[RMDB]
RNA sequence: GGGAACGACUCGAGUAGAGUCGAAAAUGUUUGUCGACAUUUUGUGGGAAAAAUGGCAUCAUUUUUGAGGAUGGAGAAUGGUGGAGUAUAGAAAACCAAACAGAAUCUGACUUCCAAAAUUUUAAAACAUAUGGACUGUUUUCGAACAGUCCAUAUGAAAAGAAACAACAACAACAAC
Reactivity to DMS in 0.01 (KOAc 150mM, MgCl2 10mM, bicine 150mM(pH8.5), 24C), signal-to-noise 4, nucleotides 027 to 126: u000g020u000u010u000g020u010c070g000a130c050a000u000u000u000u010g020u020g000g010g000a020a050a050a050a070u010g010g010c060a050u020c020a050u000u020u020u000u000g010a180g000g010a050u000g020g010a130g000a050a180u000g010g010u000g000g010a150g010u000a070u010a150g000a090a070a110a040c060c050a020a060a160c080a080g000a130a040u000c040u000g010a150c100u000u010c020c010a030a060a050a140u000u000u000u010a010a090a070a170
Reactivity to 2A3 in 0.01 (KOAc 150mM, MgCl2 10mM, bicine 150mM(pH8.5), 24C), signal-to-noise 2, nucleotides 027 to 126: u020g020u000u060u130g120u080c040g030a080c000a040u100u120u020u050g070u080g000g070g010a080a020a000a000a040u070g040g000c030a020u030c010a020u030u000u040u070u050g060a040g000g070a050u080g050g020a040g040a120a030u040g000g030u050g030g030a040g060u090a080u040a220g140a010a090a020a020c030c020a020a060a000c020a050g110a100a010u060c030u030g040a050c020u050u000c000c000a020a090a080a140u110u200u140u230a040a060a000a000